Chemical mapping of a 177-nucleotide RNA with DMS and 2A3. For DMS, 5,481 sequencing reads were counted. The RNA was probed in 150 mM KOAc, 10 mM MgCl2 and 150 mM bicine (pH 8.5) at 24 C. DMS adducts were read by reverse transcription with MarathonRT. 2A3 adducts were read by reverse transcription with SuperScript II with manganese.

RNA sequence: GGGAACGACUCGAGUAGAGUCGAAAAGCGCCAGCUGCGACGGCGACGACGGCCAACAGUGAUCUGGACUUGGCGGCACGUCGGCGUCUCUUCAUCUCACAGCCCUCGACGCUGGCGACGCGCCGCCCAUAUGGUCAGGCUUCGGCCUGACCAUAUGAAAAGAAACAACAACAACAAC
Reactivity to DMS in 0.01 (KOAc 150mM, MgCl2 10mM, bicine 150mM(pH8.5), 24C), signal-to-noise 3, nucleotides 027 to 126: g020c040g020c010c030a050g000c040u000g000c040g000a050c180g000g000c060g010a120c040g000a070c060g000g000c050c020a070a210c050a060g010u020g000a130u000c090u010g000g000a070c090u030u000g000g000c090g020g010c030a090c000g020u000c000g000g010c020g000u000c000u040c050u000u010c130a100u010c040u030c010a180c140a110g010c010c010c010u010c110g000a020c020g000c010u000g020g000c020g000a060c070g000c080g020c030c010g000c010c030
Reactivity to 2A3 in 0.01 (KOAc 150mM, MgCl2 10mM, bicine 150mM(pH8.5), 24C), signal-to-noise 5, nucleotides 027 to 126: g050c060g020c000c010a020g010c030u110g030c040g070a100c050g030g080c010g020a020c020g030a010c040g070g020c020c010a060a030c020a060g040u060g100a130u070c050u120g000g070a060c040u040u070g000g000c000g000g000c030a030c110g010u000c000g020g030c000g010u000c020u010c010u140u130c040a160u060c040u060c040a080c050a080g040c010c010c010u060c060g010a020c010g000c000u020g000g030c010g000a020c020g000c030g000c010c000g010c000c020
The data come from the RNA Mapping Database (RMDB), library OK1LIB.